[RMDB]
RNA sequence: GGGAACGACUCGAGUAGAGUCGAAAAGAUAUGGAGAGAGCUUUGAUCGUAUGGGAUCGGAAACGAUCCUUACGGGAGCUCCUCCUAAGUCAAAAGACAAUGUUCCCGUUCGCGGGAACAUUGUCAAGCUAUUAUGUAAGUUCGCUUACAUAAUAGCAAAAGAAACAACAACAACAAC
Reactivity to DMS in 0.01 (KOAc 150mM, MgCl2 10mM, bicine 150mM(pH8.5), 24C), signal-to-noise 6, nucleotides 027 to 126: g010a030u010a300u000g000g010a010g000a170g020a000g010c000u000u000u000g010a110u010c000g010u000a010u010g020g010g010a010u000c000g000g000a050a060a120c000g010a010u000c000c000u000u000a000c000g010g000g000a010g000c000u000c010c000u000c000c000u000a000a060g000u000c030a080a090a120a140g000a020c000a010a000u000g000u000u000c000c000c000g020u000u010c180g030c020g000g000g000a010a000c000a000u000u000g000u000c000a030a070
Reactivity to 2A3 in 0.01 (KOAc 150mM, MgCl2 10mM, bicine 150mM(pH8.5), 24C), signal-to-noise 6, nucleotides 027 to 126: g010a010u060a030u120g000g000a040g010a010g000a000g030c020u180u150u100g150a190u300c010g000u020a110u300g070g010g010a000u000c010g010g010a050a060a020c010g000a000u000c000c000u000u000a000c000g000g010g010a000g000c000u000c010c000u000c000c000u010a080a010g030u000c030a060a000a080a140g000a000c010a000a010u000g000u000u000c030c030c010g010u060u070c300g000c000g030g000g000a000a000c000a000u010u000g000u000c000a000a010
Chemical mapping of a 177-nucleotide RNA with DMS and 2A3. For DMS, 15,209 sequencing reads were counted. Reactivities are rounded to 0.1 and cut off at 0 and 3. The RNA was probed in 150 mM KOAc, 10 mM MgCl2 and 150 mM bicine (pH 8.5) at 24 C. For 2A3 the reverse transcriptase was SuperScript II with manganese.